[RMDB]
RNA sequence: GGGAACGACUCGAGUAGAGUCGAAAAAUCAGCCUUCGUUCUGUAAACGGGGUUGGAUCCGACUCUCCUAGGCUCUCCAACCCAACUCCUACUCAAUACGUCCUCGUCGUACAGAACGGUAACAUGUAAAACGAAGGCUGCUUCGGCAGCCUUCGAACACAACACACGACUUCGGUCGUGUGUUGUGAAAAGAAACAACAACAACAAC
Reactivity to 2A3 in 0.01 (KOAc 150mM, MgCl2 10mM, bicine 150mM(pH8.5), 24C), signal-to-noise 1, nucleotides 027 to 156: a030u110c070a040g000c000c000u140u180c000g010u000u020c030u050g120u070a000a220a000c040g050g010g000g010u000u000g020g000a010u180c010c000g130a120c030u080c020u040c170c000u070a030g000g040c000u000c000u000c000c000a000a070c000c000c000a000a030c010u000c010c000u090a100c060u070c220a110a020u100a230c080g160u070c010c030u170c030g040u030c020g020u010a030c020a020g000a100a040c180g030g000u040a000a070c070a120u150g070u230a040a020a010a020c020g000a000a010g000g000c000u000g000c000u020u000c160g150g010c000a000g000c000c000u070u000c000g000a000a000

Chemical mapping of a 207-nucleotide RNA with 2A3. The 2A3 profile rests on 434 reads. 2A3 adducts were read by reverse transcription with SuperScript II with manganese.